[RMDB]
RNA sequence: GGGAACGACUCGAGUAGAGUCGAAAACUGACAAAAUUGGAUGUCAAACCAAGUGCCCAGCCCCAAUCAAAGAUGAUUUGGAGGGAAGUGGAUUUUUAUCGAUCACCAAAUUACUUACCCCCAACCACAACCUACGAAGGUUCGCCUUCGUAGGUUGAAAAGAAACAACAACAACAAC
Reactivity to 2A3 in 0.01 (KOAc 150mM, MgCl2 10mM, bicine 150mM(pH8.5), 24C), signal-to-noise 5, nucleotides 027 to 126: c030u040g050a020c060a020a160a040a170u180u200g070g020a070u120g100u080c010a000a030a040c040c020a080a040g040u040g120c010c020c020a000g070c040c000c000c000a000a070u140c050a130a130a110g110a110u160g000a030u050u070u120g070g000a160g050g000g000a020a000g060u070g040g040a090u090u040u000u100u180a160u130c140g070a050u050c020a010c100c070a030a020a050u100u040a030c020u000u230a300c000c020c000c000c000a000a010c030c000a030
Reactivity to DMS in 0.01 (KOAc 150mM, MgCl2 10mM, bicine 150mM(pH8.5), 24C), signal-to-noise 1, nucleotides 027 to 126: c090u080g010a090c020a060a020a070a130u000u060g000g000a080u000g000u000c050a040a170a050c100c040a250a030g040u020g020c000c000c000a100g000c080c020c000c010a070a080u020c120a050a060a150g000a090u000g000a080u020u000u000g010g000a070g010g000g000a060a040g000u030g000g000a020u000u010u050u060u010a070u000c020g000a030u040c040a020c000c090a000a000a000u000u000a030c020u000u000a300c030c030c000c000c010a060a050c090c140a090